[RMDB]
RNA sequence: GGGAACGACUCGAGUAGAGUCGAAAAACUUUGAGGAAGAGAUAAGAAGAAUGUUUGAGCCAGGGCAGGAGACAGCUGUUCCUCACUCUUAUUUCAUCCACUUCCGUUCACUAGGCUUGAGUGGGAAACGCUUAAUGCCUUUCGAGGCAUUAAGCGUAAAAGAAACAACAACAACAAC
Reactivity to DMS in 0.01 (KOAc 150mM, MgCl2 10mM, bicine 150mM(pH8.5), 24C), signal-to-noise 1, nucleotides 027 to 126: a050c040u020u000u070g010a090g000g020a000a020g050a040g000a060u000a010a060g010a010a170g000a110a150u000g000u010u000u000g000a130g020c020c120a070g000g000g000c090a040g000g020a170g060a120c230a120g090c100u040g000u000u000c000c000u000c010a090c180u060c000u000u000a030u000u000u010c090a060u030c060c000a100c010u020u000c010c060g020u000u000c030a060c130u060a070g020g000c200u000u000g000a080g000u000g000g030g000a180a070
Reactivity to 2A3 in 0.01 (KOAc 150mM, MgCl2 10mM, bicine 150mM(pH8.5), 24C), signal-to-noise 3, nucleotides 027 to 126: a000c110u170u070u040g070a060g000g010a020a060g000a010g020a030u110a130a040g040a060a000g110a170a260u220g130u120u150u170g030a010g020c050c040a040g000g020g060c030a030g000g090a070g010a020c030a030g080c010u030g040u070u090c000c000u000c020a050c030u010c010u000u030a050u060u030u050c050a070u000c010c010a030c010u050u000c000c000g050u060u050c010a110c180u080a050g040g010c020u050u020g000a000g050u040g000g040g000a050a060
This 177-nucleotide RNA was probed chemically with DMS and 2A3. The reactions ran in a buffer of 150 mM KOAc, 10 mM MgCl2 and 150 mM bicine (pH 8.5), at 24 C. For 2A3, 1,262 sequencing reads were counted. The data come from the RNA Mapping Database (RMDB), library OK1LIB. For DMS, 1,295 sequencing reads were counted.